The data come from the RNA Mapping Database (RMDB), library OK2TRN. The record gives the reactivity of an RNA of 177 nucleotides to DMS and 2A3. DMS adducts were read by reverse transcription with MarathonRT.
RNA sequence: GGGAACGACUCGAGUAGAGUCGAAAAGGCGUCUUCGCUGCCUCGGCCGCCGUGCACUGACCGGUAGCCGCCGUAAUCGCGGCAUUGUUCCCAUAAAAGGAUGUGGGUGUGGGUGCCGAAGUAGCAGCCGUGCUGGAUACUUCGGUAUCCAGCACGGAAAAGAAACAACAACAACAAC
Reactivity to DMS in 0.01 (KOAc 150mM, MgCl2 10mM, bicine 150mM(pH8.5), 24C), signal-to-noise 3, nucleotides 027 to 126: g010g000c080g010u000c040u010u010c140g040c040u000g010c020c020u000c010g000g030c010c050g020c010c000g020u000g020c020a070c080u010g000a080c010c040g010g030u000a130g000c020c010g020c010c080g010u000a070a130u030c300g000c020g010g000c000a150u010u000g010u000u000c010c000c000a130u010a050a090a120a120g010g000a080u010g010u010g000g000g030u000g020u000g010g000g010u010g010c000c000g020a010a010g010u000a030g020c020a180g000
Reactivity to 2A3 in 0.01 (KOAc 150mM, MgCl2 10mM, bicine 150mM(pH8.5), 24C), signal-to-noise 3, nucleotides 027 to 126: g090g040c060g140u020c070u150u090c090g000c040u040g010c020c000u000c000g020g000c040c050g030c010c010g170u060g010c010a040c110u110g140a080c030c020g050g030u040a030g010c000c000g030c010c000g080u080a050a060u170c080g000c000g000g000c000a000u010u230g030u120u060c000c000c020a000u140a020a130a000a000g160g030a120u170g060u170g200g040g000u030g020u040g000g030g030u040g000c010c000g000a020a000g010u010a010g000c020a010g030